Structure probing data (2A3 and DMS) for a 207-nucleotide construct.
The reactions ran in a buffer of 150 mM KOAc, 10 mM MgCl2 and 150 mM bicine (pH 8.5), at 24 C.
In probing experiments dimethyl sulfate is read out at A N1 and C N3, which are open when not base-paired.
[RMDB]
RNA sequence: GGGAACGACUCGAGUAGAGUCGAAAAUUUGCGCAUACCGUAGGAGGUAAACAGAAUGUUGUCUACUUAUACUUUAUUCAGAACUGCAGUUCCCUUAACAGAGGUAUGGUUAUUGGCCACAUCUCGGGAACUACAAUUUUGCAGGCUAAUGGCACUCACAUCUAACUCUGUUCGCAGAGUUAGAUGUAAAAGAAACAACAACAACAAC
Reactivity to 2A3 in 0.01 (KOAc 150mM, MgCl2 10mM, bicine 150mM(pH8.5), 24C), signal-to-noise 3, nucleotides 027 to 156: u060u030u090g040c060g020c030a030u030a090c020c020g040u070a090g030g130a080g020g020u070a060a120a010c040a030g160a150a170u110g020u070u030g020u060c040u030a080c040u150u090a090u070a170c030u100u210u140a110u140u120c040a020g040a170a070c030u020g000c000a000g020u000u000c030c000c000u020u080a120a070c070a030g000a000g000g000u030a020u030g010g030u030u080a190u180u300g140g010c010c000a010c000a010u020c010u000c040g010g000g000a000a000c000u060a040c040a110a090u160u130u170u140g030c020a030g030g000c010u100a080a020u070g030g000c060a020c080u070c040
Reactivity to DMS in 0.01 (KOAc 150mM, MgCl2 10mM, bicine 150mM(pH8.5), 24C), signal-to-noise 1, nucleotides 027 to 156: u000u000u000g000c030g010c020a140u000a040c040c040g000u010a130g000g020a090g000g000u000a050a070a120c030a060g000a140a120u000g020u010u000g020u000c000u000a050c040u000u010a130u000a070c030u000u010u000a050u020u000c000a070g020a000a020c020u010g010c020a030g000u000u010c000c000c030u000u020a050a140c180a120g000a000g060g040u000a000u000g020g030u000u010a230u000u000g030g000c020c010a010c010a000u000c000u010c020g010g020g000a000a030c040u010a010c010a000a050u000u000u000u000g010c100a080g030g000c030u010a060a070u000g020g000c050a110c060u010c090